[RMDB]
RNA sequence: GGGAACGACUCGAGUAGAGUCGAAAACAUGACAAUGCAAUCACCUAUUCAACUACGAUUUAGGAUGCAAGCAAAGCAGCAUAUGAAGGUCUGCCGCCUUGAUGGUGAAUGGGUAACCUUUAGAGAAGAGCGCGAUAUUAUUCGUAAUAUCGCGCUCAAAAGAAACAACAACAACAAC
Reactivity to DMS in 0.01 (KOAc 150mM, MgCl2 10mM, bicine 150mM(pH8.5), 24C), signal-to-noise 2, nucleotides 027 to 126: c100a110u000g020a080c210a110a140u010g000c050a090a210u000c070a080c000c020u000a050u050u000c010a040a120c130u000a120c090g000a120u000u000u000a050g020g090a090u020g000c070a060a170g020c060a050a050a120g000c040a100g010c070a050u010a040u000g000a070a080g000g000u000c030u000g020c000c020g020c060c030u020u030g000a100u010g000g000u000g010a060a060u010g030g010g000u030a140a180c010c090u000u010u000a160g010a030g000a080a120
Reactivity to 2A3 in 0.01 (KOAc 150mM, MgCl2 10mM, bicine 150mM(pH8.5), 24C), signal-to-noise 2, nucleotides 027 to 126: c080a100u140g020a070c060a040a170u120g100c010a060a040u020c010a060c010c000u040a060u020u030c010a120a070c020u130a090c130g090a090u000u050u140a060g040g000a060u090g010c030a000a120g040c010a090a160a020g010c030a010g030c000a050u080a100u200g080a060a000g070g010u040c030u050g040c010c000g050c020c020u040u120g090a090u140g030g010u070g060a080a030u070g040g000g030u130a030a030c000c010u020u080u150a080g010a030g020a300a020

An RNA of 177 nucleotides, treated with DMS and 2A3 and read out base by base. The data come from the RNA Mapping Database (RMDB), library OK2TST. Values cover nucleotides 27 to 126.